[RMDB]
RNA sequence: GGGAACGACUCGAGUAGAGUCGAAAAGAUAUGGAAUGCUCUUACGGGAGAACUACGUUCGGAAACGAACGGAGUUCGAAGAACGUAAGAGGCAUUCCUAAGUCAAACUAGAGCUUCGGCUCUAGAACAGACAUAACUUCUUCGGAAGUUAUGUCUGAAAAGAAACAACAACAACAAC
Reactivity to DMS in 0.01 (KOAc 150mM, MgCl2 10mM, bicine 150mM(pH8.5), 24C), signal-to-noise 4, nucleotides 027 to 126: g020a030u020a300u000g010g010a040a000u000g010c000u000c000u020u000a010c010g020g020g000a120g020a010a010c010u000a040c010g010u010u000c000g000g010a140a100a260c000g000a010a000c000g000g000a010g010u010u000c010g000a060a200g010a150a140c010g010u010a010a000g010a040g010g020c010a000u000u000c000c000u010a010a130g010u000c020a140a120a230c020u020a010g000a010g020c000u000u010c300g030g000c010u000c000u000a010g010a160a300
Reactivity to 2A3 in 0.01 (KOAc 150mM, MgCl2 10mM, bicine 150mM(pH8.5), 24C), signal-to-noise 2, nucleotides 027 to 126: g000a030u090a040u150g010g000a000a020u010g020c010u000c010u000u030a010c000g020g000g060a080g010a010a000c010u010a000c010g000u010u010c010g060g000a080a100a070c020g020a010a010c010g000g000a000g030u000u010c000g000a010a000g030a030a000c010g000u020a010a000g010a060g010g020c020a000u010u010c000c000u010a100a020g030u000c030a030a070a190c010u010a010g000a000g010c020u060u130c300g170g040c000u000c010u000a000g000a030a020